[RMDB]
RNA sequence: GGGAACGACUCGAGUAGAGUCGAAAAUUCGAGGAGCACCAGUCCUUAAGCUUAGCAUACCUGCAUAUCACACAGGAGGAAGCGUGAAAGCGUAACGACCGUUCCUAAAUACGCAUAGCUAAGCGGAUAUUAAAUUUAAAUUCGUUUAAAUUUAAUAAAAAGAAACAACAACAACAAC
Reactivity to 2A3 in 0.01 (KOAc 150mM, MgCl2 10mM, bicine 150mM(pH8.5), 24C), signal-to-noise 3, nucleotides 027 to 126: u040u020c040g030a010g000g010a010g020c040a040c070c010a000g080u030c010c000u030u080a060a000g000c000u010u010a000g000c010a020u010a060c010c000u010g020c020a030u060a020u110c040a030c000a000c010a050g010g020a030g040g050a060a040g010c000g000u010g070a060a020a000g020c010g020u030a020a030c030g030a040c020c000g050u030u000c000c000u010a020a040a020u160a010c010g000c010a010u030a000g010c000u010a020a000g000c000g000g000a000
Reactivity to DMS in 0.01 (KOAc 150mM, MgCl2 10mM, bicine 150mM(pH8.5), 24C), signal-to-noise 8, nucleotides 027 to 126: u020u020c060g000a060g000g010a080g000c050a090c050c040a200g000u020c030c030u020u010a100a130g000c000u000u000a030g000c010a120u020a110c120c060u000g000c060a100u020a070u030c180a110c210a150c090a050g010g000a150g000g020a100a140g010c030g000u000g000a100a070a090g000c030g000u000a050a170c080g000a110c090c020g000u000u000c020c000u000a050a100a070u020a030c070g010c010a050u010a020g000c010u010a020a020g010c000g000g000a120